[RMDB]
RNA sequence: GGGAACGACUCGAGUAGAGUCGAAAACACAUUACGUCAGCAGCUAUAUGAUAGAUUCCAAAAUGAUCCGGAAUUUAUGGAGAUGAUGGCUCAUGGGGAAUUCACGCCAACAUUUCCUUGGGUCACACAUCCAGGUAAAUUUCGAUUUACCUGGAUGAAAAGAAACAACAACAACAAC
Reactivity to DMS in 0.01 (KOAc 150mM, MgCl2 10mM, bicine 150mM(pH8.5), 24C), signal-to-noise 9, nucleotides 027 to 126: c080a090c110a100u010u000a060c120g020u000c040a060g000c050a060g010c050u000a070u000a060u010g010a080u000a050g010a100u000u000c010c020a040a080a140a130u010g010a040u000c050c060g020g010a080a060u000u000u000a050u020g010g000a040g010a040u000g010a120u000g000g000c000u010c130a070u010g010g020g010g010a090a080u010u010c120a080c230g010c050c040a020a070c080a020u000u000u000c000c000u000u000g010g000g010u000c010a080c190a140
Reactivity to 2A3 in 0.01 (KOAc 150mM, MgCl2 10mM, bicine 150mM(pH8.5), 24C), signal-to-noise 9, nucleotides 027 to 126: c050a010c010a050u060u200a080c050g040u040c040a030g000c020a000g000c060u080a040u040a060u290g060a020u040a070g060a060u030u040c020c000a030a030a040a180u140g020a040u040c040c040g070g040a080a060u090u140u090a080u140g020g000a050g010a020u040g000a020u010g000g000c010u030c100a110u120g020g000g020g130a040a050u210u150c060a040c120g010c010c000a030a030c010a050u010u010u000c000c000u010u060g010g010g000u010c010a010c000a000

The record gives the reactivity of an RNA of 177 nucleotides to DMS and 2A3.
Reactivities are given for positions 27 through 126.
DMS adducts were read by reverse transcription with MarathonRT.
The reactions ran in a buffer of 150 mM KOAc, 10 mM MgCl2 and 150 mM bicine (pH 8.5), at 24 C.